Source: RMDB library OK2TRN, as collected in RNAgym. An RNA of 177 nucleotides, treated with 2A3 and DMS and read out base by base. 2A3 adducts were read by reverse transcription with SuperScript II with manganese.
RNA sequence: GGGAACGACUCGAGUAGAGUCGAAAAAGCGCCGUCGAUGACGCGCGGUAGAUAGCCCGGCCGCGGCCGGCCCGGCAUCACCCGGUGGUCAAUGUAGACCCAGGCCGGCAACGCUGUGUCGUCGGUGCCAGUUAGCAGAAUUCGUUCUGCUAACUGGAAAAGAAACAACAACAACAAC
Reactivity to 2A3 in 0.01 (KOAc 150mM, MgCl2 10mM, bicine 150mM(pH8.5), 24C), signal-to-noise 2, nucleotides 027 to 126: a000g060c030g000c000c000g000u010c010g030a080u100g120a020c020g030c010g000c040g010g020u070a080g010a250u090a030g030c000c000c000g010g000c030c010g050c040g140g090c070c020g020g040c010c020c020g040g000c020a090u100c040a050c040c020c040g060g050u190g040g000u040c040a140a190u300g110u180a110g030a020c010c010c010a080g130g000c010c000g000g000c010a000a030c020g000c020u060g040u030g000u040c000g000u010c010g000g010u010g040
Reactivity to DMS in 0.01 (KOAc 150mM, MgCl2 10mM, bicine 150mM(pH8.5), 24C), signal-to-noise 3, nucleotides 027 to 126: a080g010c050g030c020c020g020u000c000g010a070u000g000a060c070g020c050g030c010g010g010u000a040g010a100u000a150g010c040c010c100g000g000c000c020g030c150g010g030c120c010g000g000c010c010c110g000g010c070a060u010c110a110c170c030c040g010g000u010g020g010u000c030a150a130u020g000u010a120g010a020c040c010c300a140g000g000c000c020g000g010c080a150a060c080g000c040u010g030u000g000u000c020g020u000c010g010g020u000g000

Annotation
The DMS profile rests on 2,298 reads. The reactions ran in a buffer of 150 mM KOAc, 10 mM MgCl2 and 150 mM bicine (pH 8.5), at 24 C.